An RNA of 177 nucleotides, treated with 2A3 and DMS and read out base by base. For 2A3 the reverse transcriptase was SuperScript II with manganese. The DMS profile rests on 3,368 reads. Conditions: 150 mM KOAc, 10 mM MgCl2 and 150 mM bicine (pH 8.5), 24 C.
RNA sequence: GGGAACGACUCGAGUAGAGUCGAAAAAUAACGUAUUGUGGUUGGAACAAAUGUCGCAAAAGUUUGCCCCAUUUUAUGCCGUUGAAUCAAAAAGAAUCAGGGAACUCAAGAACAAAAUGGUAAAUUAUACGAAGUUUCUAUUCGUAGAAACUUCGUAAAAAGAAACAACAACAACAAC
Reactivity to 2A3 in 0.01 (KOAc 150mM, MgCl2 10mM, bicine 150mM(pH8.5), 24C), signal-to-noise 3, nucleotides 027 to 126: a000u050a010a000c050g020u040a100u010u030g000u040g100g020u030u100g030g030a060a020c030a030a050a030u100g070u090c040g010c050a000a040a040a060g000u000u010u060g050c000c020c000c010a020u050u060u020u040a070u080g000c010c010g040u020u080g090a170a080u030c040a010a030a140a000a020g130a000a020u060c060a090g000g000g030a000a050c020u000c080a110a030g040a140a040c010a160a090a010a040u110g010g000u050a060a090a140u160u150a080
Reactivity to DMS in 0.01 (KOAc 150mM, MgCl2 10mM, bicine 150mM(pH8.5), 24C), signal-to-noise 3, nucleotides 027 to 126: a040u040a070a050c050g020u020a130u000u000g000u000g000g000u000u000g000g000a100a070c140a040a070a080u000g000u020c100g000c070a040a060a040a140g000u010u010u020g020c060c040c010c080a080u010u000u000u020a040u010g040c020c040g040u020u000g000a040a130u030c050a040a040a080a050a160g000a120a040u020c030a080g000g020g000a060a110c200u020c090a050a110g000a070a050c080a080a080a050a030u020g000g030u000a030a020a110u030u030a070